[RMDB]
RNA sequence: GGGAACGACUCGAGUAGAGUCGAAAAUAUUAGGGUGUGAGAGUAUCUCUCUCCCAGCCGGUUCGCGCAGCCAUCUUUUUCGACUUUACUUGGGUUAGCUGCGCGAACUCGCUGGCGUUCCCAGCAAUCCAUUACAACACUUCGGUGUUGUAAUGGAAAAAGAAACAACAACAACAAC
Reactivity to DMS in 0.01 (KOAc 150mM, MgCl2 10mM, bicine 150mM(pH8.5), 24C), signal-to-noise 2, nucleotides 027 to 126: u010a050u000u000a170g000g020g010u000g000u000g010a010g000a070g010u000a110u010c040u020c010u000c010u020c040c010c010a010g030c020c110g000g030u000u000c000g000c000g000c000a030g000c000c160a060u020c030u010u000u000u010u000c020g000a030c050u010u010u010a050c110u020u000g020g010g000u000u010a040g010c030u000g010c010g010c000g000a010a010c020u010c300g000c010u010g000g010c000g000u000u000c000c000c000a110g000c260a090a100
Reactivity to 2A3 in 0.01 (KOAc 150mM, MgCl2 10mM, bicine 150mM(pH8.5), 24C), signal-to-noise 2, nucleotides 027 to 126: u130a050u060u090a010g000g020g010u010g000u010g020a010g000a010g030u280a300u100c070u000c000u010c010u010c000c000c020a000g030c010c070g020g000u000u000c000g020c010g000c000a000g000c040c000a130u030c180u040u170u030u040u040c020g030a040c040u120u140u220a080c060u140u160g020g020g000u040u100a020g000c000u000g000c000g000c000g000a000a000c000u010c000g000c010u000g000g020c010g000u000u000c000c010c000a010g040c010a020a060